RNA sequence: GGGAACGACUCGAGUAGAGUCGAAAAGAUAUGGAUCUAGAACUACAGAAGCCGAUGAAAGAUAUCGGAAACGAUAUCUGGAGGCUUAUGCUAGAUCCUAAGUCAAACAUCUACUUCGGUAGAUGAAUCAUAUUAGUCGGUUCGCCGACUAAUAUGAAAAAGAAACAACAACAACAAC
Reactivity to DMS in 0.01 (KOAc 150mM, MgCl2 10mM, bicine 150mM(pH8.5), 24C), signal-to-noise 4, nucleotides 027 to 126: g000a020u010a300u010g040g010a000u000c000u000a000g000a120a060c150u020a300c060a040g000a110a060g000c000c000g020a120u000g000a180a080a030g010a010u000a000u010c000g010g000a040a070a080c010g020a000u000a000u000c000u000g020g000a020g030g010c000u000u000a020u000g010c000u000a010g010a020u000c000c000u000a000a070g010u010c020a190a110a300c010a010u000c000u000a010c000u000u020c190g030g000u000a020g010a010u000g000a140a140
Reactivity to 2A3 in 0.01 (KOAc 150mM, MgCl2 10mM, bicine 150mM(pH8.5), 24C), signal-to-noise 3, nucleotides 027 to 126: g030a030u040a020u080g010g020a010u010c000u020a010g030a120a200c110u280a130c300a170g300a300a010g050c020c020g300a300u030g020a020a010a000g010a000u010a000u010c000g000g010a040a030a000c000g000a010u000a000u000c000u000g020g000a000g010g000c010u010u040a020u040g000c010u000a000g000a000u000c000c000u010a040a010g040u020c040a000a080a110c000a000u040c010u010a000c010u020u070c240g100g000u000a000g000a000u010g000a010a080